[RMDB]
RNA sequence: GGGAACGACUCGAGUAGAGUCGAAAACAUAAGACCUCAGAGCUAAUGAGCCACAUAGCUACCCAAGGUGAAAGCUCCUUCUCUCGCAAUGUGUAACUCAUGAUUCUCAUGACCCCUGGUUGGAGAGCGCGCUAACACGCCUUCGGGCGUGUUAGAACUCACAUCUACUAUUCGUAGUAGAUGUGAGAAAAGAAACAACAACAACAAC
Reactivity to DMS in 0.01 (KOAc 150mM, MgCl2 10mM, bicine 150mM(pH8.5), 24C), signal-to-noise 2, nucleotides 027 to 156: c000a090u000a080a120g010a070c030c020u000c040a090g010a090g000c070u040a140a050u000g000a090g040c010c000a070c030a060u000a120g010c020u000a070c040c010c040a080a080g030g000u040g000a060a080a200g020c040u000c000c000u000u010c030u000c050u000c040g020c040a090a080u000g020u000g030u000a050a040c020u010c030a070u000g000a190u010u000c030u000c010a070u000g020a190c030c000c020c020u010g040g000u000u010g010g000a100g010a100g030c070g010c040g010c020u000a010a020c000a010c000g010c010c010u000u000c300g050g000g000c010g040u000g000u010u000a000g000a030a050
Reactivity to 2A3 in 0.01 (KOAc 150mM, MgCl2 10mM, bicine 150mM(pH8.5), 24C), signal-to-noise 4, nucleotides 027 to 156: c020a030u160a070a060g050a050c010c040u050c070a040g000a010g010c010u030a100a020u070g020a020g040c030c010a020c010a050u060a030g040c030u060a090c020c030c040a050a020g020g010u060g050a170a090a050g040c060u110c030c000u050u040c050u010c040u050c040g000c060a060a070u050g030u020g020u090a050a030c010u000c010a010u030g030a120u300u030c080u010c050a070u080g040a070c000c010c010c030u030g040g000u040u040g000g030a040g000a010g070c100g010c010g010c050u000a000a000c000a000c000g010c000c010u050u060c180g060g000g000c000g010u000g000u000u000a000g000a000a000
Source information: Structure probing data (DMS and 2A3) for a 207-nucleotide construct. 2A3 adducts were read by reverse transcription with SuperScript II with manganese. The reactions ran in a buffer of 150 mM KOAc, 10 mM MgCl2 and 150 mM bicine (pH 8.5), at 24 C. Values cover nucleotides 27 to 156. For 2A3, 3,662 sequencing reads were counted.